[RMDB]
RNA sequence: GGGAACGACUCGAGUAGAGUCGAAAACAGGUCUCGGUCUUGGCAACAAGCGCUCAGCCCAAGUUCUUCUCAGAGACUUCCACUCAGUUGAAACCAGGGGUCUUGCUUGACUUUGCCAUUGGAAAGAUCUAAAUAAGAGGUUCGCCUCUUAUUUAGAAAAAGAAACAACAACAACAAC
Reactivity to DMS in 0.01 (KOAc 150mM, MgCl2 10mM, bicine 150mM(pH8.5), 24C), signal-to-noise 9, nucleotides 027 to 126: c140a110g020g010u000c010u010c050g020g020u010c040u000u000g000g000c030a040a090c060a030a040g020c040g020c160u010c220a150g000c010c000c010a110a140g000u000u000c030u000u000c020u010c150a110g010a060g010a110c110u010u010c160c130a100c020u000c030a090g010u010u000g000a090a050a060c050c080a170g010g000g000g010u000c060u010u010g000c020u000u000g000a150c120u000u000u000g000c010c010a060u010u010g010g000a110a080a100g010a120
Reactivity to 2A3 in 0.01 (KOAc 150mM, MgCl2 10mM, bicine 150mM(pH8.5), 24C), signal-to-noise 5, nucleotides 027 to 126: c040a050g090g070u030c030u020c040g060g040u050c040u080u060g020g020c010a020a020c010a060a020g000c030g030c090u100c130a030g010c000c010c000a010a030g010u030u010c010u020u020c050u010c050a050g010a210g040a300c040u200u060c050c010a050c010u000c020a040g010u040u020g050a100a040a050c040c030a070g020g000g010g030u030c030u080u140g010c000u030u020g020a140c030u040u040u050g000c010c010a040u040u090g070g050a110a050a050g060a040

Structure probing data (DMS and 2A3) for a 177-nucleotide construct. The 2A3 profile rests on 5,587 reads. The reactions ran in a buffer of 150 mM KOAc, 10 mM MgCl2 and 150 mM bicine (pH 8.5), at 24 C. For DMS, 12,030 sequencing reads were counted.